[RMDB]
RNA sequence: GGGAACGACUCGAGUAGAGUCGAAAAAGUUCGCGCGUCCGUGAAACGCGAAAAUCGGACGGUGGCUGCAAGUCGCAUCGCAAAACCGCGGCAAGUGGAGUUAGCGAGAGGAGGCUGGGUUUUGGCUAGAACACACGGUACUUCGGUACCGUGUGAAGUUCUUGAUAUCUUUCGAGAUAUCAAGAACAAAAGAAACAACAACAACAAC
Reactivity to 2A3 in 0.01 (KOAc 150mM, MgCl2 10mM, bicine 150mM(pH8.5), 24C), signal-to-noise 4, nucleotides 027 to 156: a000g050u130u160c020g000c000g020c020g010u000c020c000g080u070g090a120a110a040c090g010c020g070a070a020a000a060u100c020g010g010a010c020g010g020u030g020g000c030u060g010c030a080a040g020u050c010g010c040a030u040c040g000c060a040a020a060a050c050c030g020c000g070g000c100a100a070g030u050g060g030a070g010u070u070a030g030c030g020a030g010a050g060g030a020g040g000c040u020g030g050g000u020u050u080u080g010g000c010u040a030g050a190a010c000a000c000a000c000g000g020u000a000c010u020u030c130g040g000u000a000c000c010g000u000g000u000g000a000a000
Reactivity to DMS in 0.01 (KOAc 150mM, MgCl2 10mM, bicine 150mM(pH8.5), 24C), signal-to-noise 2, nucleotides 027 to 156: a100g000u020u020c020g020c010g040c010g000u010c040c060g040u010g030a080a160a040c020g040c010g000a010a020a130a120u000c020g020g030a080c030g000g040u000g020g000c010u000g020c040a040a110g030u000c010g010c000a170u010c060g000c040a100a060a100a140c050c060g010c040g040g040c130a080a100g010u000g000g010a130g030u000u000a090g000c060g000a080g010a160g030g000a070g020g010c010u000g010g020g010u010u000u000u000g010g040c050u000a100g020a090a190c010a010c010a000c000g000g040u000a000c000u000u000c230g050g010u000a000c000c000g020u000g000u000g020a010a090
Conditions: 150 mM KOAc, 10 mM MgCl2 and 150 mM bicine (pH 8.5), 24 C. This 207-nucleotide RNA was probed chemically with 2A3 and DMS. It was measured as part of the RMDB library M2RFPK. For 2A3, 3,859 sequencing reads were counted. For DMS the reverse transcriptase was MarathonRT. Reactivities are rounded to 0.1 and cut off at 0 and 3.